Source: RMDB library M2PK50, as collected in RNAgym. Chemical mapping of a 177-nucleotide RNA with DMS and 2A3. For 2A3, 3,819 sequencing reads were counted.
[RMDB]
RNA sequence: GGGAACGACUCGAGUAGAGUCGAAAAGUUAACUCCUUCGGGAGUUAACAAAAGGACAGUGCGAGUCCAAACGCACAAAGAUGACAGAAAUGUCAUCAAAAAAAAGUCCUAGCUUCGGCUAGGACAACAUAAAACUAUCGUUCGCGAUAGUUUUAUGAAAAGAAACAACAACAACAAC
Reactivity to DMS in 0.01 (KOAc 150mM, MgCl2 10mM, bicine 150mM(pH8.5), 24C), signal-to-noise 4, nucleotides 027 to 126: g000u000u000a000a020c000u000c010c000u000u010c240g030g020g020a030g010u000u000a000a010c000a050a040a100a180g010g010a150c180a080g020u000g010c000g010a150g010u000c040c070a040a140a090c010g000c010a010c010a100a110a120g010a010u000g000a010c010a010g000a080a120a130u010g010u000c000a000u010c000a020a000a000a070a040a020a070a150g000u000c000c000u000a000g000c000u000u000c250g030g000c000u000a000g000g010a000c000a000a070
Reactivity to 2A3 in 0.01 (KOAc 150mM, MgCl2 10mM, bicine 150mM(pH8.5), 24C), signal-to-noise 2, nucleotides 027 to 126: g000u000u000a000a000c000u000c020c000u030u020c100g050g000g010a000g000u000u000a000a000c000a010a000a000a010g070g000a030c080a070g010u000g010c000g010a020g080u030c070c000a130a080a010c010g000c010a000c010a010a080a000g040a020u000g000a000c010a010g040a050a070a010u010g010u010c000a010u010c020a010a030a000a010a020a000a000a030g000u000c000c000u000a010g000c000u030u020c240g110g010c000u000a000g000g000a010c000a000a000
Conditions: 150 mM KOAc, 10 mM MgCl2 and 150 mM bicine (pH 8.5), 24 C. The DMS profile rests on 3,439 reads.